Chemical mapping of a 207-nucleotide RNA with 2A3. The RNA was probed in 150 mM KOAc, 10 mM MgCl2 and 150 mM bicine (pH 8.5) at 24 C. Reactivities are given for positions 27 through 156. It was measured as part of the RMDB library RNAMAK.
RNA sequence: GGGAACGACUCGAGUAGAGUCGAAAAGAUAUGGAUUUCUUUCUUGGAUUUAUGGGUCUGUGAUGCAUGUCGGAAACGACAUGUGCAUGGCCCAUUGUCAGAUUGAAAUCCUAAGUCAAAACGUGACGAGAACGACUUCGGUCGUUCUCGUCACGAACGUGAUCUAGUAGUUCGCUACUAGAUCACGAAAAGAAACAACAACAACAAC
Reactivity to 2A3 in 0.01 (KOAc 150mM, MgCl2 10mM, bicine 150mM(pH8.5), 24C), signal-to-noise 2, nucleotides 027 to 156: g020a020u100a040u140g000g000a010u000u010u040c000u000u000u000c030u080u170g200g000a100u210u300u080a000u040g020g000g040u080c070u110g080u070g130a260u030g000c010a000u000g000u000c000g030g010a040a060a080c000g000a000c010a000u000g010u000g000c010a000u050g010g010c000c000c000a000u000u000g000u000c000a000g000a030u010u010g000a000a000a000u000c000c010u000a060a020g030u020c010a010a010a090a100c020g000u000g000a000c000g000a010g010a000a010c000g050a010c040u120u150c300g000g000u000c000g020u000u000c000u020c000g010u000c010a000c000g000a000a000